[RMDB]
RNA sequence: GGGAACGACUCGAGUAGAGUCGAAAAUGUUUGGAAAUGACUAGCACAGAGAACUGGGAGAUUAUGAAUUGCACUGAAGCUGGCCCAUCUCAACAUGUUUAUAAAAUAAGAAAUAGAAGCAAAGGGGGAUGGAGAUGUCAUUCGUGACAUCUCCAUCAAAAGAAACAACAACAACAAC
Reactivity to DMS in 0.01 (KOAc 150mM, MgCl2 10mM, bicine 150mM(pH8.5), 24C), signal-to-noise 1, nucleotides 027 to 126: u000g000u010u000u000g020g030a060a130a040u010g030a040c090u000a030g010c010a260c110a040g000a060g010a060a060c150u000g020g040g000a250g010a060u010u020a070u010g020a140a120u000u000g040c060a090c060u010g020a090a140g010c010u000g000g000c010c040c040a130u000c040u000c070a080a060c040a040u000g000u010u000u010a060u010a010a020a000a080u000a060a150g000a050a110a060u000a000g010a050a180g000c040a010a090a090g000g000g030g000
Annotation: The data come from the RNA Mapping Database (RMDB), library OK2TRN. This 177-nucleotide RNA was probed chemically with DMS. The reactions ran in a buffer of 150 mM KOAc, 10 mM MgCl2 and 150 mM bicine (pH 8.5), at 24 C. DMS adducts were read by reverse transcription with MarathonRT.